This 177-nucleotide RNA was probed chemically with 2A3. Source: RMDB library M2PK90, as collected in RNAgym. The 2A3 profile rests on 7,543 reads. The reactions ran in a buffer of 150 mM KOAc, 10 mM MgCl2 and 150 mM bicine (pH 8.5), at 24 C.
RNA sequence: GGGAACGACUCGAGUAGAGUCGAAAAAAAAACGCAACGACUCGAGUAGAGUCGAAAAGGGAACGACUCGACUAGAGUCGAAAAACAAACGACUCGAGUAGAGUCGAAGCGAACCCAACCCAAAAAAACUAUAUAGUACCUUCGGGUACUAUAUAGUAAAAGAAACAACAACAACAAC
Reactivity to 2A3 in 0.01 (KOAc 150mM, MgCl2 10mM, bicine 150mM(pH8.5), 24C), signal-to-noise 1, nucleotides 027 to 126: a000a000a120a000a060c300g000c300a000a020c010g000a010c000u000c000g000a010g030u010a010g000a000g000u000c000g000a000a000a000a000g000g000g000a020a010c010g000a000c000u000c000g020a030c290u040a010g000a000g000u000c010g000a000a000a000a000a300c300a300a010a000c000g000a000c010u000c000g000a010g030u030a010g000a000g000u000c000g000a020a010g000c010g040a030a040c000c000c010a020a050c010c020c020a050a110a020a010a000a000